[RMDB]
RNA sequence: GGGAACGACUCGAGUAGAGUCGAAAAUGCUUCGGCUGUUGGGCUUCGACACACGGUGGUCGAGUGCCGCCGAUGAUCCGACGCUGGCCGAUAUCAGCCUGGGCGAGCAGCGAAUUCUGCUGACCCGGUUUAUCGUCUGGUUCGCCAGACGAUAAACAAAAGAAACAACAACAACAAC
Reactivity to DMS in 0.01 (KOAc 150mM, MgCl2 10mM, bicine 150mM(pH8.5), 24C), signal-to-noise 3, nucleotides 027 to 126: u040g050c150u000u000c190g000g030c000u000g000u010u010g000g000g000c040u000u000c010g000a060c050a110c060a110c060g040g000u000g000g020u010c020g000a230g010u020g010c010c000g000c000c000g010a140u000g000a080u030c140c070g000a030c150g010c090u010g000g000c000c010g030a100u020a060u030c030a030g000c020c000u040g000g010g000c030g000a070g020c020a050g010c190g000a140a230u040u010c030u010g000c000u030g000a120c000c010c000g000
Reactivity to 2A3 in 0.01 (KOAc 150mM, MgCl2 10mM, bicine 150mM(pH8.5), 24C), signal-to-noise 2, nucleotides 027 to 126: u170g000c010u050u060c010g010g000c010u040g060u090u130g080g020g000c010u040u020c030g040a010c000a010c010a020c080g040g110u040g000g010u050c070g140a150g090u240g030c000c000g000c000c000g070a070u030g020a080u020c060c050g020a010c050g020c070u070g060g000c020c030g060a060u060a060u120c020a010g040c000c020u050g000g020g000c050g030a030g000c010a000g010c040g190a090a090u280u040c030u030g000c000u030g080a150c000c000c000g010